[RMDB]
RNA sequence: GGGAACGACUCGAGUAGAGUCGAAAAGAUAUGGAUGCACAACAGCCGACCAGGCUAAGACAGUCGGAAACGAUCGAGCCUGGAUCGGACAUGUGCAUCCUAAGUCAAACGUCGGUUCGCCGACGAAUCUUCACAUGUUGUUCGCAACAUGUGAAGAAAAAGAAACAACAACAACAAC
Reactivity to 2A3 in 0.01 (KOAc 150mM, MgCl2 10mM, bicine 150mM(pH8.5), 24C), signal-to-noise 3, nucleotides 027 to 126: g050a010u090a020u120g010g000a000u010g020c000a000c020a070a140c080a140g060c010c000g000a010c000c010a000g010g020c000u010a060a050g120a070c050a030g060u030c020g080g020a070a110a040c020g010a030u080c040g020a000g010c010c010u010g010g000a030u020c000g020g000a000c010a010u020g000u000g000c000a000u000c000c000u000a010a000g000u000c010a080a050a080c000g010u000c010g000g020u040u090c290g030c060c010g000a000c010g010a000a060
Reactivity to DMS in 0.01 (KOAc 150mM, MgCl2 10mM, bicine 150mM(pH8.5), 24C), signal-to-noise 4, nucleotides 027 to 126: g000a000u000a300u010g000g010a020u000g000c000a020c000a040a090c300a170g000c010c000g000a020c020c010a030g000g010c000u000a100a060g040a060c300a140g000u000c000g020g000a150a080a190c000g010a010u000c060g020a030g020c000c010u010g000g000a050u000c000g000g000a010c060a100u010g010u000g010c000a010u000c000c000u000a000a080g010u000c030a080a100a120c020g010u000c000g010g010u010u020c240g010c000c000g000a000c000g000a080a030